[RMDB]
RNA sequence: GGGAACGACUCGAGUAGAGUCGAAAAGAAAGAAAAGAACCUGGGCGAGGACAGAAAACUGGAACGGACCAAAGCCAAAAAGGAAAGGACGAAAAUCCUAAGUCCUACGAGGUAAAAGAAAAGAAAAAUUUUAGUGCUACUUCGGUAGCACUAAAAUAAAAGAAACAACAACAACAAC
Reactivity to DMS in 0.01 (KOAc 150mM, MgCl2 10mM, bicine 150mM(pH8.5), 24C), signal-to-noise 1, nucleotides 027 to 126: g000a260a130a120g000a200a060a200a250g000a110a120c090c150u000g010g020g000c110g000a170g000g000a090c050a050g000a110a110a060a040c110u000g000g000a060a150c110g000g030a020c000c000a020a100a250g080c000c030a050a080a000a210a070g000g000a050a050a060g000g000a000c000g020a030a020a200a300u000c000c000u000a110a230g000u000c030c020u000a030c030g030a170g010g010u050a040a080a130a080g020a060a050a100a180g000a050a130a060a080
This 177-nucleotide RNA was probed chemically with DMS. Conditions: 150 mM KOAc, 10 mM MgCl2 and 150 mM bicine (pH 8.5), 24 C. For DMS, 758 sequencing reads were counted. Source: RMDB library OK1LIB, as collected in RNAgym.